Structure probing data (2A3) for a 207-nucleotide construct. Conditions: 150 mM KOAc, 10 mM MgCl2 and 150 mM bicine (pH 8.5), 24 C.

RNA sequence: GGGAACGACUCGAGUAGAGUCGAAAAAGCAGACACAUAGACGAAGAGACGUACAAUGAGAUAACAUCGGUUAGCCGCGAUCUGGGCCAUAGGCAUAGGGACGAUCUCCAUGCCACUCUGAAUUUCUUGUUAACCAAUAGAAAACGGACCCUUCCUGCGGCUACACGGUGUUCGCACCGUGUAGCCGAAAAGAAACAACAACAACAAC
Reactivity to 2A3 in 0.01 (KOAc 150mM, MgCl2 10mM, bicine 150mM(pH8.5), 24C), signal-to-noise 1, nucleotides 027 to 156: a000g060c020a040g030a090c040a010c000a230u030a100g170a080c000g050a080a040g020a000g100a160c100g030u130a020c060a240a240u180g030a120g060a170u050a180a000c020a040u110c010g010g000u000u040a000g000c000c000g020c010g060a060u050c040u190g000g000g000c060c020a110u200a100g060g020c000a000u050a000g010g010g000a010c140g120a300u030c000u000c030c010a080u000g000c000c000a000c030u160c000u000g020a210a130u150u070u060c050u090u000g000u000u000a020a250c010c010a060a000u160a100g000a010a020a000a000c010g080g070a060c000c000c000u030u030c000c000u000g020
2A3 adducts were read by reverse transcription with SuperScript II with manganese.